RNA sequence: GGGAACGACUCGAGUAGAGUCGAAAAGCAGCAUUAACUAUGUGAUUUGGACACUUCACUUACCAUACAGUCUGCAAAAUGGGCAUCGCAAUACCUGCUGCAUAUAAUUGGUGUAACAGUCACAAUGAUGAUAGGACACGUUCGCGUGUCCUAUCAUAAAAGAAACAACAACAACAAC
Reactivity to 2A3 in 0.01 (KOAc 150mM, MgCl2 10mM, bicine 150mM(pH8.5), 24C), signal-to-noise 3, nucleotides 027 to 126: g000c040a010g010c020a080u100u090a010a160c100u090a110u150g040u030g010a050u240u100u080g040g010a010c010a010c050u080u150c050a060c040u040u120a060c010c010a020u050a110c060a020g040u050c030u050g010c000a030a020a050a070u050g040g000g000c010a050u040c040g000c060a040a050u030a120c000c020u030g000c000u020g010c040a010u020a010u010a090a130u050u110g010g010u000g000u010a080a070c020a020g020u030c000a010c050a060a080u180g070
Reactivity to DMS in 0.01 (KOAc 150mM, MgCl2 10mM, bicine 150mM(pH8.5), 24C), signal-to-noise 3, nucleotides 027 to 126: g020c020a060g010c020a090u010u000a060a120c120u010a080u010g020u000g000a090u000u020u030g000g020a060c070a040c050u000u020c170a040c090u010u000a080c060c040a070u010a110c110a120g000u000c020u010g010c070a050a050a070a090u000g010g000g030c050a040u000c120g020c120a040a060u000a100c090c030u010g010c020u000g000c020a050u000a050u010a070a100u000u000g020g000u000g020u000a030a060c030a060g020u000c060a050c090a050a100u010g020